[RMDB]
RNA sequence: GGGAACGACUCGAGUAGAGUCGAAAAGAUAUGGAUACAAAUGAGUGCCGAUUACACGCAACAGCCUACUGGCUCGGAAACGAGCUUAGGACAUGCGUUGAAUCGGCACUCAUUUGUAUCCUAAGUCCUUAUGAUUCGGGUUCGCCCGAAUCAUAAGAAAAGAAACAACAACAACAAC
Reactivity to DMS in 0.01 (KOAc 150mM, MgCl2 10mM, bicine 150mM(pH8.5), 24C), signal-to-noise 2, nucleotides 027 to 126: g010a130u010a270u000g000g010a000u000a000c010a000a010a020u020g010a020g030u010g010c010c000g020a000u000u000a160c040a030c000g000c000a060a070c300a230g000c000c000u000a040c300u000g000g020c000u000c010g020g000a080a060a230c020g030a030g040c010u000u000a000g000g010a020c090a180u000g010c000g030u000u020g030a020a030u000c000g020g000c000a010c000u000c000a000u000u000u000g010u000a000u000c000c000u000a000a120g000u000c020
Structure probing data (DMS) for a 177-nucleotide construct.
For DMS, 1,428 sequencing reads were counted.
The reactions ran in a buffer of 150 mM KOAc, 10 mM MgCl2 and 150 mM bicine (pH 8.5), at 24 C.
The data come from the RNA Mapping Database (RMDB), library TTRINS.